Source: RMDB library OK2TRN, as collected in RNAgym. The record gives the reactivity of an RNA of 177 nucleotides to 2A3 and DMS. The DMS profile rests on 2,362 reads. 2A3 adducts were read by reverse transcription with SuperScript II with manganese. The reactions ran in a buffer of 150 mM KOAc, 10 mM MgCl2 and 150 mM bicine (pH 8.5), at 24 C.
RNA sequence: GGGAACGACUCGAGUAGAGUCGAAAAAGAGGAUUACCUUUUCUGUAUGCUCGCUUUGUACCUGAUGAGGAAGUCACUGCAUUUUCUGUCUGCGACAUCUCGCCUCCUCAAUACUCAAACAGGGAUCCGAAGGAGAGUACUUCGGUACUCUCCUUCGAAAAGAAACAACAACAACAAC
Reactivity to 2A3 in 0.01 (KOAc 150mM, MgCl2 10mM, bicine 150mM(pH8.5), 24C), signal-to-noise 3, nucleotides 027 to 126: a000g100a030g020g030a090u060u180a240c020c000u050u010u020u080c050u070g090u030a050u100g030c000u020c040g070c050u040u070u140g040u080a140c020c020u020g030a080u050g030a060g030g020a080a040g030u030c020a050c170u090g010c060a060u200u090u050u050c090u100g180u000c070u060g020c030g040a020c000a090u050c050u050c070g070c000c000u030c010c010u010c000a010a040u080a100c050u050c100a070a100a110c020a030g040g000g050a040u000c060
Reactivity to DMS in 0.01 (KOAc 150mM, MgCl2 10mM, bicine 150mM(pH8.5), 24C), signal-to-noise 3, nucleotides 027 to 126: a080g010a070g000g000a150u000u010a060c070c030u010u010u010u000c050u000g010u000a030u000g030c070u000c080g000c070u020u000u010g000u000a110c050c040u000g000a130u010g000a050g010g010a070a070g010u000c040a050c090u010g000c020a040u020u000u000u010c150u020g020u000c060u000g010c030g010a070c060a050u010c090u010c100g020c050c060u010c010c010u000c040a060a070u010a080c100u010c090a060a050a090c080a070g000g010g000a080u010c120